[RMDB]
RNA sequence: GGGAACGACUCGAGUAGAGUCGAAAAAUCUACGACGAAGGUGGACAAGUACGCGCCUACGGUACUGAGAUUGGUGCGUUUGUGCGUUUAGAUGACCUUGACCCCAGCUAUGCCUAUAGUGAGAUCGCAUCGGGGGUAGUUUCGACUACCCCCGAUGAAAAGAAACAACAACAACAAC
Reactivity to DMS in 0.01 (KOAc 150mM, MgCl2 10mM, bicine 150mM(pH8.5), 24C), signal-to-noise 3, nucleotides 027 to 126: a060u000c010u010a070c120g050a070c030g020a070a040g010g030u000g030g010a100c060a050a100g020u010a070c030g020c020g020c010c020u000a060c080g010g000u020a060c130u000g000a120g030a140u000u010g010g040u010g000c010g020u000u000u000g010u000g010c000g020u000u000u000a150g010a100u000g010a050c070c000u010u000g010a120c030c010c010c070a070g020c040u010a020u000g000c050c070u000a110u010a050g000u000g000a090g000a080u000c100g000
Reactivity to 2A3 in 0.01 (KOAc 150mM, MgCl2 10mM, bicine 150mM(pH8.5), 24C), signal-to-noise 2, nucleotides 027 to 126: a000u040c010u030a050c020g090a000c030g020a080a040g090g070u100g030g110a010c000a040a000g060u030a010c000g010c000g000c030c020u010a020c060g140g010u080a080c100u130g130a110g120a300u160u170g050g030u010g030c020g010u030u010u020g020u010g000c020g000u020u060u120a140g000a160u150g050a070c000c000u010u060g080a050c030c020c000c010a030g020c020u070a050u190g140c000c000u070a030u000a090g090u070g080a090g020a090u080c070g030